[RMDB]
RNA sequence: GGGAACGACUCGAGUAGAGUCGAAAAGAUAUGGAAACGGACCCGGAACUGACGCUUCGGAAACGAAGCGUCUGUUCCGCCGUUUCCUAAGUCAAAACCAGCUCUACCGUUCGCGGUAGAGCUGGAAGAAUAGUCAGUUGUUCGCAACUGACUAUUCAAAAGAAACAACAACAACAAC
Reactivity to DMS in 0.01 (KOAc 150mM, MgCl2 10mM, bicine 150mM(pH8.5), 24C), signal-to-noise 3, nucleotides 027 to 126: g000a040u000a300u010g000g000a010a010a000c000g000g010a160c200c300c140g000g010a010a000c000u000g000a020c000g010c000u000u010c010g000g000a070a060a220c000g000a000a000g000c010g000u000c000u000g000u000u000c000c020g000c000c000g010u000u000u000c000c000u000a010a050g000u000c040a090a070a110a160c000c010a000g000c010u000c010u000a010c000c010g010u010u020c220g020c010g000g010u000a000g000a000g020c000u000g000g010a010a040
Reactivity to 2A3 in 0.01 (KOAc 150mM, MgCl2 10mM, bicine 150mM(pH8.5), 24C), signal-to-noise 1, nucleotides 027 to 126: g020a020u090a010u100g000g000a010a000a010c000g000g030a070c120c110c050g000g020a020a000c010u040g000a010c020g000c020u010u010c020g040g040a110a080a000c010g000a000a000g060c010g000u000c000u010g000u010u000c010c000g000c000c000g000u000u010u000c000c000u000a030a000g000u000c040a000a000a080a130c000c000a000g020c000u030c010u000a010c020c000g070u110u100c300g020c010g140g000u000a000g030a000g010c000u010g010g000a020a000